[RMDB]
RNA sequence: GGGAACGACUCGAGUAGAGUCGAAAAGAUAUGGAUGUGAACAGACAUGCCUAUCGGAAACGAUAGCGCAACAGCUGUUUCACAUCCUAAGUCAAAAGGACGUACUAUGUUCGCAUAGUACGUCCAACAUACUUUGAGAGUUCGCUCUCAAAGUAUGAAAAGAAACAACAACAACAAC
Reactivity to 2A3 in 0.01 (KOAc 150mM, MgCl2 10mM, bicine 150mM(pH8.5), 24C), signal-to-noise 7, nucleotides 027 to 126: g020a010u040a020u090g000g000a000u000g000u000g010a010a000c010a010g280a090c040a100u050g010c000c000u000a000u000c000g000g000a030a040a000c010g000a000u000a000g170c180g000c080a010a020c040a090g090c010u010g020u070u080u070c000a000c000a000u000c000c000u000a000a010g000u000c020a020a010a060a150g020g000a000c000g000u010a000c000u010a000u030g030u060u120c270g010c210a000u000a000g000u000a000c000g000u000c000c000a000a000
Reactivity to DMS in 0.01 (KOAc 150mM, MgCl2 10mM, bicine 150mM(pH8.5), 24C), signal-to-noise 9, nucleotides 027 to 126: g000a030u000a290u000g000g000a010u000g010u000g010a020a010c010a010g010a120c100a200u000g010c000c000u000a000u000c000g010g000a080a060a120c010g010a010u000a000g000c260g030c000a010a050c270a140g000c000u000g000u010u010u000c000a000c000a000u000c000c000u000a010a060g000u010c020a090a060a110a100g000g000a010c000g010u000a010c000u000a000u000g010u000u010c220g010c010a010u000a010g010u000a000c000g000u000c000c010a020a060

Structure probing data (2A3 and DMS) for a 177-nucleotide construct. For DMS, 28,214 sequencing reads were counted. The reactions ran in a buffer of 150 mM KOAc, 10 mM MgCl2 and 150 mM bicine (pH 8.5), at 24 C. For 2A3, 39,995 sequencing reads were counted.